[RMDB]
RNA sequence: GGGAACGACUCGAGUAGAGUCGAAAAGCGGUCAGCAACAUCGCCAACGUCAAAACCGCCGUCGAGCGGCAUGUCAUUGACUCGCUGGAUGCCGAGGGUGAGGACGCACUAGUGGGCGAGAAGGGCGACUGGUGACGUAGUUCGCUACGUCACCAGUAAAAGAAACAACAACAACAAC
Reactivity to DMS in 0.01 (KOAc 150mM, MgCl2 10mM, bicine 150mM(pH8.5), 24C), signal-to-noise 4, nucleotides 027 to 126: g010c030g010g000u000c030a090g020c120a050a050c060a100u010c040g020c030c010a130a130c040g000u000c030a020a040a210a140c040c020g000c030c030g000u000c090g010a090g010c020g000g000c110a020u010g010u000c060a160u010u000g010a030c010u010c040g010c030u010g000g010a080u010g010c070c040g020a070g010g000g000u010g000a170g000g000a060c070g010c050a070c120u010a120g020u000g000g010g000c020g010a050g020a070a130g010g020g000c080g000
Reactivity to 2A3 in 0.01 (KOAc 150mM, MgCl2 10mM, bicine 150mM(pH8.5), 24C), signal-to-noise 2, nucleotides 027 to 126: g080c050g000g100u070c050a020g010c050a040a000c000a090u030c030g000c020c010a040a030c030g000u020c030a000a070a120a120c020c020g030c050c000g170u100c050g090a070g030c000g030g020c020a010u170g080u010c050a110u010u250g020a030c020u000c110g020c020u040g060g030a030u060g040c050c030g030a080g010g000g080u080g050a040g030g100a040c020g000c030a030c110u070a040g070u080g090g010g000c020g010a020g010a020a030g020g030g010c000g030